[RMDB]
RNA sequence: GGGAACGACUCGAGUAGAGUCGAAAAAUGACUACCAGAUUUUUAAGACCUUGUUAGGCAUGAAUUCAAGGACGCCCUAUGUUCUGUUGGGGAAGCCUUCCUUAGAAUUCAUAAGGGGUUCCAUAAGGAAAGGAAUAGGGCUCUUAUUCAUCAGAGCCCAGUCGUAGUAAUUCGUUACUACGACUGGAAAAGAAACAACAACAACAAC
Reactivity to 2A3 in 0.01 (KOAc 150mM, MgCl2 10mM, bicine 150mM(pH8.5), 24C), signal-to-noise 1, nucleotides 027 to 156: a000u060g030a000c030u040a060c000c090a040g080a180u190u070u000u000u260a050a010g040a090c000c000u000u110g060u130u240a050g040g010c000a020u000g010a030a050u110u000c040a040a010g100g080a120c050g010c010c000c000u030a020u110g070u040u050c030u000g210u170u190g050g000g000g060a020a000g080c020c000u020u030c010c000u030u010a040g010a100a140u210u100c000a050u080a030a030g040g000g000g000u040u000c040c010a040u050a080a080g010g030a070a000a010g070g020a070a050u040a030g000g000g000c000u000c000u020u050a040u000u020c000a040u020c060a040g070a030g150c000
Reactivity to DMS in 0.01 (KOAc 150mM, MgCl2 10mM, bicine 150mM(pH8.5), 24C), signal-to-noise 1, nucleotides 027 to 156: a050u020g010a060c020u020a100c020c040a100g020a020u010u000u010u000u010a100a200g000a050c010c000u000u010g060u000u000a060g000g000c080a040u030g000a170a050u000u010c010a090a060g050g010a090c140g010c030c010c010u000a080u000g010u010u000c100u000g000u010u000g000g010g010g000a050a190g030c040c000u000u000c000c000u000u000a100g000a010a050u000u010c020a100u000a100a170g030g030g040g030u000u000c010c050a170u000a070a090g000g020a030a130a100g030g000a090a110u020a050g000g020g040c000u010c010u000u000a120u000u020c110a040u010c080a080g000a040g010c090

Annotation:
Chemical mapping of a 207-nucleotide RNA with 2A3 and DMS. Conditions: 150 mM KOAc, 10 mM MgCl2 and 150 mM bicine (pH 8.5), 24 C.